[RMDB]
RNA sequence: GGGAACGACUCGAGUAGAGUCGAAAACUGCAGGUCAACGGUACUUCUUCAGAUCAGCUAUUGCAGAAGAUAGGUUAUCCAAGCGCUCUGGGCCAGUGCGACUGUAUAUAGGAGCUUGUAAUUUGAACCAGAAGCUAACUCUCUCCGAAACAAUGAGCGUAAAUAUGCCAUUCGUGGCAUAUUUACGAAAAGAAACAACAACAACAAC
Reactivity to 2A3 in 0.01 (KOAc 150mM, MgCl2 10mM, bicine 150mM(pH8.5), 24C), signal-to-noise 4, nucleotides 027 to 156: c030u030g000c030a020g000g030u070c030a050a010c080g010g010u010a040c020u020u040c010u040u030c040a020g000a170u020c030a000g050c040u080a080u160u160g020c040a010g010a080a000g030a060u140a050g080g000u070u070a020u060c040c030a050a010g020c010g000c020u010c020u040g030g000g030c030c010a020g020u050g050c000g030a060c030u050g050u130a080u020a020u070a200g020g040a020g040c010u030u070g050u110a080a140u140u070u160g050a040a020c010c010a020g020a060a010g020c020u020a040a060c010u010c000u000c010u000c080c040g070a070a060a040c050a050a160u170g030a030g000
Reactivity to DMS in 0.01 (KOAc 150mM, MgCl2 10mM, bicine 150mM(pH8.5), 24C), signal-to-noise 2, nucleotides 027 to 156: c020u000g010c060a080g000g030u000c040a110a070c040g020g020u010a030c030u000u000c040u010u000c030a130g000a120u000c010a120g020c010u000a080u010u000g000c030a120g010a080a060g020a090u010a020g000g000u000u000a070u000c090c060a090a160g020c050g030c060u010c030u000g020g000g040c040c040a050g020u020g010c020g000a070c020u020g020u010a070u000a120u000a050g030g010a090g000c020u000u020g040u000a030a140u000u020u010g010a060a070c040c020a040g020a070a100g010c000u000a040a110c050u000c040u000c010u020c010c010g020a170a110a060c040a050a130u000g020a120g010